RNA sequence: GGGAACGACUCGAGUAGAGUCGAAAAGGGAUACGGCCUAUGACCGAUUCGUGGUGCCUGGAACUAAGCUGACCAUCGAGCAGGCAAAUACCAUUUCCCGCGCCUACUCGGCCCGCUUGCUGCAAUCCUAUUCAAAGCAGUUGGCGCAGACCUACGCCUUAAUCAGGAUGUUCGCAUCCUGAUUAAGAAAAGAAACAACAACAACAAC
Reactivity to DMS in 0.01 (KOAc 150mM, MgCl2 10mM, bicine 150mM(pH8.5), 24C), signal-to-noise 2, nucleotides 027 to 156: g000g040g010a070u000a100c030g050g040c000c020u000a250u000g020a050c000c050g000a180u000u000c020g050u000g010g010u000g020c030c110u000g010g010a120a190c100u010a060a120g000c040u000g020a110c040c050a090u000c010g000a070g000c050a070g040g000c010a050a070a130u000a140c020c050a150u000u000u000c020c000c000g030c090g000c030c010u000a030c050u000c030g030g000c020c020c030g020c050u000u010g000c000u010g000c000a090a230u000c130c050u010a180u050u000c120a000a080a290g000c010a080g030u000u000g000g020c000g000c050a100g000a080c030c020u020a080c020g050c080
Reactivity to 2A3 in 0.01 (KOAc 150mM, MgCl2 10mM, bicine 150mM(pH8.5), 24C), signal-to-noise 5, nucleotides 027 to 156: g050g010g010a030u080a080c070g020g000c060c090u150a130u130g070a150c000c020g040a080u040u090c050g010u030g010g010u030g040c020c020u020g050g070a090a100c120u130a150a020g080c080u070g100a060c010c020a070u180c050g020a010g010c050a020g060g000c010a030a090a010u170a020c020c020a030u040u030u010c000c000c010g010c000g000c020c000u010a030c010u000c000g030g000c010c020c000g000c010u000u030g000c000u000g020c010a080a190u160c060c040u160a180u150u250c090a080a100a020g000c010a010g010u010u040g010g000c020g000c030a000g040a040c000c020u040a040c040g070c010